[RMDB]
RNA sequence: GGGAACGACUCGAGUAGAGUCGAAAAACUUGUAAGUCAGUUACUAACAGCAUUGGUACUUGAAUGUCCACUGUCGUUGGAUUGCGCAUAAAACCUGGUGGGUGGCACCAGUCCUUUUUCAAGUUACUAUCCGCUUCUAUUUCGAUAGAAGCGGAUAAAAAGAAACAACAACAACAAC
Reactivity to 2A3 in 0.01 (KOAc 150mM, MgCl2 10mM, bicine 150mM(pH8.5), 24C), signal-to-noise 2, nucleotides 027 to 126: a000c000u020u000g010u040a130a080g100u140c020a030g010u050u040a210c020u090a050a030c010a010g040c010a030u040u040g000g050u150a040c020u120u130g290a300a120u170g050u030c000c000a000c000u020g000u030c020g040u000u040g060g060a100u030u070g010c070g090c050a050u090a070a070a000a020c020c010u010g000g000u010g000g090g150u120g080g000c010a010c010c010a000g020u000c030c050u060u070u050u030u020c050a050a040g020u050u010a070c020
Reactivity to DMS in 0.01 (KOAc 150mM, MgCl2 10mM, bicine 150mM(pH8.5), 24C), signal-to-noise 2, nucleotides 027 to 126: a080c040u010u010g020u000a070a090g000u000c040a030g000u000u010a120c020u000a050a020c040a050g020c010a120u000u010g000g010u000a020c030u000u020g030a180a110u010g000u000c010c010a060c040u000g010u000c100g030u010u000g000g000a060u000u010g000c100g030c110a110u010a050a050a060a070c170c020u010g000g020u010g000g000g010u010g000g000c020a040c020c030a010g010u000c040c010u020u000u010u010u000c050a020a030g000u000u010a070c150